[RMDB]
RNA sequence: GGGAACGACUCGAGUAGAGUCGAAAAUCUUAUAUGUUCGCAUAUAAGAAAAGGCGGAGUAGUGUUGCGUCGCGAAAGGCCAUAAAUUAACAAUCACUCAGAUACAGACCUGGUUCGCCAGGUCUAAACACGUGUAACUGUUCGCAGUUACACGUGUAAAAGAAACAACAACAACAAC
Reactivity to DMS in 0.01 (KOAc 150mM, MgCl2 10mM, bicine 150mM(pH8.5), 24C), signal-to-noise 1, nucleotides 027 to 126: u000c000u000u010a000u000a000u000g010u000u010c160g020c000a030u000a000u000a000a010g000a000a050a050a140g010g020c000g000g030a080g010u000a090g010u000g010u010u000g010c270g020u010c040g000c040g000a140a060a220g000g010c020c010a090u010a040a070a090u000u000a090a100c070a090a080u000c130a050c090u000c060a110g000a110u020a070c110a030g040a000c010c000u000g000g010u000u010c250g000c030c000a010g000g030u000c000u000a010a060